This 207-nucleotide RNA was probed chemically with DMS and 2A3. For 2A3, 3,304 sequencing reads were counted. The reactions ran in a buffer of 150 mM KOAc, 10 mM MgCl2 and 150 mM bicine (pH 8.5), at 24 C. 2A3 adducts were read by reverse transcription with SuperScript II with manganese. The DMS profile rests on 4,118 reads.
[RMDB]
RNA sequence: GGGAACGACUCGAGUAGAGUCGAAAAGGAGAAGGUGACAACCAGGGCCCCUUUGAGGAACGCAGUUUCUUGGAUUCACACGAGAGCGGCAAGUGUGUCAGGCAGCCCACCUUGGCUCCCUGCAGCUCUCCCACAGUAAGGAGCUCACAGCUGUCAAGACUAUAAUAAUGUUCGCAUUAUUAUAGUCAAAAGAAACAACAACAACAAC
Reactivity to DMS in 0.01 (KOAc 150mM, MgCl2 10mM, bicine 150mM(pH8.5), 24C), signal-to-noise 2, nucleotides 027 to 156: g000g010a080g010a130a060g000g000u000g000a120c030a050a070c040c060a170g010g030g100c010c020c010c010u000u000u000g020a110g040g010a030a070c060g030c100a110g000u010u000u010c020u000u010g020g010a130u000u000c090a170c060a060c090g000a090g000a050g000c030g010g060c030a030a060g020u020g040u000g020u000c040a060g010g000c050a110g000c030c000c040a060c160c020u000u000g020g020c010u000c060c020c010u000g000c000a040g010c010u000c010u000c010c050c030a130c070a150g020u030a060a070g020g000a050g020c030u000c030a070c090a070g000c010u000g030u000c020a050a170
Reactivity to 2A3 in 0.01 (KOAc 150mM, MgCl2 10mM, bicine 150mM(pH8.5), 24C), signal-to-noise 3, nucleotides 027 to 156: g090g010a090g030a070a040g080g040u040g030a030c040a090a060c070c070a040g010g010g000c010c000c000c000u030u090u130g050a020g010g020a020a020c060g000c240a050g020u010u050u030c040u050u050g140g000a150u200u100c080a020c020a030c160g010a000g000a000g040c030g030g000c030a060a110g030u060g000u000g010u120c000a010g010g030c020a060g000c010c010c000a040c020c000u030u020g010g000c000u010c010c020c000u000g000c010a010g010c000u000c000u040c050c000c000a100c010a000g030u070a050a020g010g030a000g010c020u040c020a080c030a020g050c020u040g020u090c050a040a070